[RMDB]
RNA sequence: GGGAACGACUCGAGUAGAGUCGAAAAAAAAGUAAACCAUCCGCCACCUCCUAGUUGUUACAAACAGAAUAGCAAAGAAGAUUUAUUUUUGCACAUUGAUAAAAUGAUGUUUUCACUGGGUAGACUACACUAUAAUCUACUUCGGUAGAUUAUAGUGAAAAGAAACAACAACAACAAC
Reactivity to DMS in 0.01 (KOAc 150mM, MgCl2 10mM, bicine 150mM(pH8.5), 24C), signal-to-noise 2, nucleotides 027 to 126: a050a040a060a070g000u000a030a060a110c060c040a080u000c060c020g000c070c020a070c080c030u000c000c000u000a060g000u000u000g010u000u000a100c130a050a080a030c010a070g000a130a080u010a110g000c020a020a010a030g000a070a110g010a110u000u000u000a080u010u000u000u000u000g010c040a190c040a030u000u010g000a130u020a050a050a030a060u000g000a100u000g020u000u000u010u000c040a100c090u000g000g000g010u010a070g000a130c090u010a100
Reactivity to 2A3 in 0.01 (KOAc 150mM, MgCl2 10mM, bicine 150mM(pH8.5), 24C), signal-to-noise 1, nucleotides 027 to 126: a010a010a000a000g170u180a180a120a010c030c000a050u010c010c000g080c040c000a010c030c000u010c020c000u010a020g050u030u080g030u080u030a020c070a010a070a000c000a020g130a190a070u080a130g000c010a090a010a000g020a040a000g050a120u000u260u170a080u020u090u160u060u040g030c010a010c000a030u030u000g010a040u140a250a080a000a000u030g040a020u010g000u000u030u010u000c040a040c000u010g020g000g000u050a030g030a020c020u050a020